[RMDB]
RNA sequence: GGGAACGACUCGAGUAGAGUCGAAAACGCAGAGGGUUCUGAUAACAAAGAACCUAGAUAGCCGCAUCGGUAUUAUAGGAUGUAGUCGGUGAGCCGUAAUGCCUGCAUCGUAAGCCUAUAAGUAAAUUUAAGUGUAAUCACUUCGGUGAUUACACAAGCCCUAAUAAGAGUUCGCUCUUAUUAGGGCAAAAGAAACAACAACAACAAC
Reactivity to 2A3 in 0.01 (KOAc 150mM, MgCl2 10mM, bicine 150mM(pH8.5), 24C), signal-to-noise 4, nucleotides 027 to 156: c060g000c040a040g050a110g100g000g030u010u000c000u030g060a070u090a190a050c040a040a130a000g000a000a000c010c010u020a020g020a110u080a020g010c030c030g050c080a110u100c060g100g000u070a020u080u050a040u070a010g030g010a020u040g070u120a050g080u090c020g010g010u020g020a010g010c020c050g060u070a060a030u090g010c020c010u050g060c020a000u030c020g030u060a030a050g000c010c010u020a020u020a090a030g080u050a020a110a270u090u170u130a200a020g000u000g000u000a000a010u000c000a000c000u010u010c050g070g000u000g000a000u000u010a000c000a000c000a000a000
Reactivity to DMS in 0.01 (KOAc 150mM, MgCl2 10mM, bicine 150mM(pH8.5), 24C), signal-to-noise 2, nucleotides 027 to 156: c070g010c060a070g000a300g000g020g000u000u000c000u010g000a130u000a120a180c300a110a180a040g000a000a040c000c000u000a050g000a230u010a120g030c050c060g010c030a110u000c030g050g030u010a050u010u000a050u000a060g020g060a040u000g000u010a140g020u010c030g000g000u010g000a070g030c040c060g060u010a120a110u010g020c030c030u020g030c020a050u010c010g030u000a120a100g000c030c020u000a030u000a030a100g000u010a070a060a100u020u010u000a060a160g000u010g000u000a010a000u000c000a010c010u000u000c200g000g010u000g000a010u000u020a000c000a000c010a030a060
This 207-nucleotide RNA was probed chemically with 2A3 and DMS.
Values are in units of 0.01, from 0 to 300, in steps of 10.
Conditions: 150 mM KOAc, 10 mM MgCl2 and 150 mM bicine (pH 8.5), 24 C.
2A3 adducts were read by reverse transcription with SuperScript II with manganese.
It was measured as part of the RMDB library M2RFPK.
For 2A3, 2,293 sequencing reads were counted.